Structure probing data (DMS and 2A3) for a 177-nucleotide construct. Reactivities are given for positions 27 through 126. Source: RMDB library OK2TST, as collected in RNAgym. For DMS the reverse transcriptase was MarathonRT.
[RMDB]
RNA sequence: GGGAACGACUCGAGUAGAGUCGAAAACAAGAUGAAGGCCUACAUCUUUACGCCGGGCGACUCCAUUUGCCGUAAGGGCGAGGUGGCCCGCGAGAUGUUCAUCAUUGCCGAUGGCAUUCUGGAGGUGGGCCUUGGUAGAUUUCGAUCUACCAAGGCCAAAAGAAACAACAACAACAAC
Reactivity to DMS in 0.01 (KOAc 150mM, MgCl2 10mM, bicine 150mM(pH8.5), 24C), signal-to-noise 1, nucleotides 027 to 126: c090a100a090g000a050u000g000a030a050g000g010c000c000u050a090c010a020u000c010u000u000u010a130c040g020c070c040g000g000g000c020g000a040c010u000c100c120a180u000u000u000g030c000c000g020u000a130a130g000g000g000c040g020a060g010g010u000g010g010c000c000c000g040c020g000a060g010a030u010g000u010u020c000a020u000c020a200u000u030g010c230c140g020a020u000g000g050c010a010u000u000c080u000g000g010a040g000g040u000g000
Reactivity to 2A3 in 0.01 (KOAc 150mM, MgCl2 10mM, bicine 150mM(pH8.5), 24C), signal-to-noise 2, nucleotides 027 to 126: c030a040a020g070a050u150g050a110a020g110g000c000c040u070a000c000a030u040c030u100u110u140a110c050g060c110c090g010g000g000c030g100a040c020u050c040c010a280u110u090u210g020c000c000g080u150a100a160g220g040g000c000g000a030g020g030u020g040g020c000c000c000g010c010g000a050g000a020u010g020u090u150c010a000u030c020a050u020u200g090c080c080g120a090u080g000g020c000a000u100u080c010u100g030g030a000g040g010u000g050

The RNA was probed in 150 mM KOAc, 10 mM MgCl2 and 150 mM bicine (pH 8.5) at 24 C.